[RMDB]
RNA sequence: GGGAACGACUCGAGUAGAGUCGAAAACUGCGGGGAGGUAAUCUUACAGUCCGGCGCGGAGCAUUGUUGAGCGGUCCAUGGGGAAACCUCCCUUCGUCCUUCGGCAUUGUGGUGCGUCGUGGGAAAGGGUAUAUUGAACGUUCGCGUUCAAUAUACCAAAAGAAACAACAACAACAAC
Reactivity to 2A3 in 0.01 (KOAc 150mM, MgCl2 10mM, bicine 150mM(pH8.5), 24C), signal-to-noise 1, nucleotides 027 to 126: c030u040g010c000g010g000g000g010a050g000g000u000a030a170u040c000u050u020a060c000a040g020u020c040c020g060g100c000g070c020g060g040a040g070c070a110u110u000g140u040u100g090a070g050c040g020g050u000c030c030a110u090g030g060g000g000a070a050a030c000c000u020c000c110c000u110u040c030g000u020c020c000u020u020c010g000g000c000a040u010u260g100u160g130g070u070g060c000g020u030c000g030u050g020g020g020a040a050a040g130
Reactivity to DMS in 0.01 (KOAc 150mM, MgCl2 10mM, bicine 150mM(pH8.5), 24C), signal-to-noise 2, nucleotides 027 to 126: c060u000g040c090g050g010g010g000a020g010g010u010a070a100u000c030u010u010a080c080a090g010u010c050c000g020g000c030g030c020g000g000a150g030c080a100u010u030g020u000u000g020a090g040c050g000g000u000c020c030a150u020g020g000g010g000a030a190a060c060c030u000c000c000c010u000u000c090g030u000c010c040u000u000c030g000g000c030a130u000u010g020u020g010g020u000g010c070g000u010c000g000u010g000g000g010a040a050a120g010
An RNA of 177 nucleotides, treated with 2A3 and DMS and read out base by base.
For DMS, 1,910 sequencing reads were counted.
DMS adducts were read by reverse transcription with MarathonRT.
It was measured as part of the RMDB library VIROID.